[RMDB]
Source information: Structure probing data (DMS and 2A3) for a 207-nucleotide construct. 2A3 adducts were read by reverse transcription with SuperScript II with manganese. Conditions: 150 mM KOAc, 10 mM MgCl2 and 150 mM bicine (pH 8.5), 24 C.
RNA sequence: GGGAACGACUCGAGUAGAGUCGAAAACGCUUACGGCCAGUAUGAACCUCAAAUGACCCAACCUCCCUGUGCCUCUGUCUCUUCUUCUGUAAAGUGGGGGAAACACACUCACUUCAUCUGGUUGUGGAAGGGAUUAAAUGAUUAACCCACAUAAACAAAGAACUUCCUGAUUCGUCAGGAAGUUCUUAAAAGAAACAACAACAACAAC
Reactivity to DMS in 0.01 (KOAc 150mM, MgCl2 10mM, bicine 150mM(pH8.5), 24C), signal-to-noise 1, nucleotides 027 to 156: c030g020c050u030u000a080c040g020g010c010c030a140g070u010a120u020g010a060a080c000c050u010c010a020a090a150u000g000a110c050c000c020a090a110c090c040u000c010c000c010u000g030u010g000c030c050u000c050u000g000u010c020u010c000u000u000c010u000u000c020u010g040u000a060a080a050g050u000g020g010g040g020g010a060a070a070c070a180c070a100c060u010c020a040c030u000u000c010a100u010c040u000g030g030u010u000g000u020g020g000a060a010g000g000g010a120u000u000a030a120a140u000g010a180u000u010a070a180c060c020c010a050c030a090u000a080a100a100c050a040
Reactivity to 2A3 in 0.01 (KOAc 150mM, MgCl2 10mM, bicine 150mM(pH8.5), 24C), signal-to-noise 2, nucleotides 027 to 156: c050g000c050u090u110a050c070g000g010c000c010a030g010u050a140u180g010a050a060c030c010u040c050a060a110a170u220g080a090c010c020c020a060a150c020c010u050c090c030c050u040g000u130g040c010c010u000c000u020g010u000c000u020c000u040u020c010u040u000c020u020g130u120a150a140a050g000u090g010g020g010g020g100a000a210a000c110a000c000a030c060u030c000a050c080u040u000c020a070u000c100u090g040g040u080u040g080u050g020g010a040a080g020g000g000a000u050u170a030a050a040u100g050a030u090u100a060a030c040c070c060a030c000a150u220a110a090a010c160a090
The data come from the RNA Mapping Database (RMDB), library OK3TST. DMS adducts were read by reverse transcription with MarathonRT.